Conditions: 150 mM KOAc, 10 mM MgCl2 and 150 mM bicine (pH 8.5), 24 C. An RNA of 177 nucleotides, treated with DMS and read out base by base. For DMS the reverse transcriptase was MarathonRT. DMS (dimethyl sulfate) methylates the pairing face of unpaired adenines and cytosines. For DMS, 1,480 sequencing reads were counted.

[RMDB]
RNA sequence: GGGAACGACUCGAGUAGAGUCGAAAAGAUAUGGAGAUCGCAACAGCCAUGGGUCGGAAACGACCCUGUGGACAUGCGGCCUCCUAAGUCAAAGGAGGGUCGGAUUGUUCGCAAUCCGACCCUCCAAGAUACGAGUAGUGUUCGCACUACUCGUAUCAAAAGAAACAACAACAACAAC
Reactivity to DMS in 0.01 (KOAc 150mM, MgCl2 10mM, bicine 150mM(pH8.5), 24C), signal-to-noise 2, nucleotides 027 to 126: g030a030u000a300u000g000g020a000g000a020u020c000g000c000a050a050c200a230g020c010c010a020u000g010g000g000u010c000g010g000a090a080a180c000g010a010c000c010c010u030g050u000g010g000a060c110a190u000g000c020g000g000c050c000u000c030c000u010a020a090g010u000c030a070a110a180g000g020a030g000g030g040u000c020g000g030a040u020u000g000u000u030c210g010c000a060a000u000c000c000g000a030c000c010c000u000c000c000a000a000